[RMDB]
RNA sequence: GGGAACGACUCGAGUAGAGUCGAAAAAGUAGGAUUCGUCCUACUCACUAGCCUUCGUGAUCGGAAUGGUAGAGAUCCUGGUCUUAGGAACCAGCUGCUGAAAGGCGGCGGUUCAAAUCCGCCCGAAGGCACCACAAUGCCAAUCUUCGGAUUGGAAGAUCAUGGCAAACUUCGGUUUGCCAUGAUCAAAAGAAACAACAACAACAAC
Reactivity to 2A3 in 0.01 (KOAc 150mM, MgCl2 10mM, bicine 150mM(pH8.5), 24C), signal-to-noise 1, nucleotides 027 to 156: a020g010u010a000g000g000a050u030u060c150g030u110c050c000u040a020c060u000c010a080c060u030a020g000c010c000u000u010c020g070u050g170a280u200c010g010g040a080a120u150g090g060u170a050g030a030g000a180u070c040c040u220g100g000u000c030u090u130a100g050g030a000a020c010c020a120g000c010u000g000c010u040g020a040a080a080g070g000c000g020g000c030g010g000u000u010c000a030a010a000u000c000c000g000c000c020c010g000a030a000g000g000c000a010c000c000a000c010a040a080u110g040c010c000a000a030u000c000u030u030c240g050g010a000u000u000g000g000a000a000
Structure probing data (2A3) for a 207-nucleotide construct. Conditions: 150 mM KOAc, 10 mM MgCl2 and 150 mM bicine (pH 8.5), 24 C. For 2A3 the reverse transcriptase was SuperScript II with manganese.